Chemical mapping of a 177-nucleotide RNA with 2A3 and DMS. For 2A3 the reverse transcriptase was SuperScript II with manganese. For DMS the reverse transcriptase was MarathonRT. Reactivities are given for positions 27 through 126. For 2A3, 9,848 sequencing reads were counted.
RNA sequence: GGGAACGACUCGAGUAGAGUCGAAAAGAUAUGGAGGGAGCCUCCUGGAUCGCGCUCGGAAACGAGCGAACUACGAUCUCUAAGGAGGCGAAGAACUCCUAAGUCAAAACUGCUGUUCGCAGCAGAACUUAGAGUUUAUGUUCGCAUAAACUCUAAGAAAAGAAACAACAACAACAAC
Reactivity to 2A3 in 0.01 (KOAc 150mM, MgCl2 10mM, bicine 150mM(pH8.5), 24C), signal-to-noise 4, nucleotides 027 to 126: g010a020u100a040u150g010g000a000g010g030g010a010g010c000c010u000c010c010u020g010g010a000u000c000g000c020g020c040u010c000g040g030a100a080a070c020g000a000g010c000g000a010a010c030u110a040c010g000a010u010c080u000c040u130a060a050g010g000a000g000g000c000g000a020a020g000a010a000c000u000c010c000u020a130a010g050u020c020a010a030a160a210c010u010g020c010u010g050u140u100c300g000c120a010g000c000a000g000a030a010
Reactivity to DMS in 0.01 (KOAc 150mM, MgCl2 10mM, bicine 150mM(pH8.5), 24C), signal-to-noise 6, nucleotides 027 to 126: g000a030u000a300u000g000g010a030g010g000g000a110g010c010c000u010c000c000u000g010g010a010u000c000g020c000g000c000u000c000g010g000a120a110a190c010g000a010g000c010g010a020a050c100u020a300c020g000a010u000c000u010c260u000a080a040g010g000a010g010g020c000g000a020a100g010a120a180c000u000c000c000u000a030a110g010u010c050a080a080a070a150c010u000g000c000u000g020u000u010c190g020c010a010g000c010a010g000a080a200